An RNA of 177 nucleotides, treated with 2A3 and DMS and read out base by base. The RNA was probed in 150 mM KOAc, 10 mM MgCl2 and 150 mM bicine (pH 8.5) at 24 C.
RNA sequence: GGGAACGACUCGAGUAGAGUCGAAAAGCGGAUCAUAUACCCUCGCGAUGAGGUGACCUUGAUCGCCGUGACCUUGGAGUGUGUGGUGCUGAUGUGUGAACUGUCUCGGGAGGAUGCCCCUGUGCGCUAAUGUCAUUGUCUUCGGACAAUGACAUUAAAAAGAAACAACAACAACAAC
Reactivity to 2A3 in 0.01 (KOAc 150mM, MgCl2 10mM, bicine 150mM(pH8.5), 24C), signal-to-noise 2, nucleotides 027 to 126: g010c020g040g030a020u040c010a000u060a000u070a080c030c030c010u010c020g060c050g130a170u290g000a030g000g020u040g020a030c020c000u020u060g050a040u060c020g000c070c010g040u040g030a080c000c000u020u050g060g040a060g020u080g020u000g000u040g000g060u060g000c030u060g020a080u070g080u040g010u040g070a060a030c040u040g050u130c050u050c040g050g010g010a040g050g040a080u080g030c000c000c000c000u050g060u070g070c040g030c030
Reactivity to DMS in 0.01 (KOAc 150mM, MgCl2 10mM, bicine 150mM(pH8.5), 24C), signal-to-noise 6, nucleotides 027 to 126: g010c030g010g010a040u000c030a030u000a150u010a210c150c010c000u000c030g030c210g010a140u010g010a030g020g010u000g000a250c140c140u010u010g010a040u000c040g020c040c050g000u000g000a100c090c020u000u000g020g000a110g030u000g020u010g030u000g000g010u000g010c030u000g000a080u000g010u010g010u010g010a070a100c090u000g010u000c040u010c060g010g000g010a100g010g010a100u010g000c050c030c020c030u000g020u010g020c110g030c140